RNA sequence: GGGAACGACUCGAGUAGAGUCGAAAAACAAUUGACGAUAUUCGACGCUUUCAUUAGCCUACGUUGAUUAAAUGCUUUCACACACCAACAAGACCCAUCUUUAAUAUAGUGACAGUGGUCUGCUGUCCUGGGCUGCAGUAUUCGUACUGCAGCCCAGAAAAGAAACAACAACAACAAC
Reactivity to 2A3 in 0.01 (KOAc 150mM, MgCl2 10mM, bicine 150mM(pH8.5), 24C), signal-to-noise 2, nucleotides 027 to 126: a000c200a020a070u030u030g030a030c000g000a020u010a100u060u090c080g000a090c020g000c010u080u080u050c010a050u130u270a020g020c000c000u070a080c090g060u060u040g200a270u000u140a040a090a030u170g020c040u040u040u000c000a020c000a000c000a000c000c010a010a300c000a010a000g150a150c030c010c000a100u090c030u040u260u080a300a170u230a060u120a120g060u130g010a040c030a000g000u030g070g300u050c110u100g120c000u000g000u000c000
Conditions: 150 mM KOAc, 10 mM MgCl2 and 150 mM bicine (pH 8.5), 24 C. Chemical mapping of a 177-nucleotide RNA with 2A3. For 2A3, 528 sequencing reads were counted. For 2A3 the reverse transcriptase was SuperScript II with manganese. It was measured as part of the RMDB library OK1LIB.